[RMDB]
RNA sequence: GGGAACGACUCGAGUAGAGUCGAAAAGUUGAGAGCGUUUAUCUUAAGUCUUUUUUAUUAGCUUAAAAAAACUAUAUACAAGUGGUGGUAGUCCGCCACUCUAAGGGGACGCCUUUAGAAGAAGAGGGAAAGGCACUAAGCUUCGGCUUAGUGCCAACCGUAUUGAUACCUUCGGGUAUCAAUACGGAAAAGAAACAACAACAACAAC
Reactivity to 2A3 in 0.01 (KOAc 150mM, MgCl2 10mM, bicine 150mM(pH8.5), 24C), signal-to-noise 1, nucleotides 027 to 156: g080u120u180g030a010g000a010g020c030g000u060u140u070a230u080c010u030u040a080a030g030u120c060u050u080u070u030u000u010a190u100u080a150g040c040u090u120a150a030a000a000a000a000a000c040u050a060u060a040u070a270c030a040a000g010u000g010g010u000g050g060u100a090g140u030c030c000g000c000c020a000c000u010c030u030a010a010g000g000g010g030a020c030g040c000c000u050u020u110a060g020a140a000g010a040a010g020a110g010g030g030a050a130a210g040g000c000a000c000u000a010a000g000c000u030u110c300g030g000c000u010u000a000g000u000g010c000c010a000a000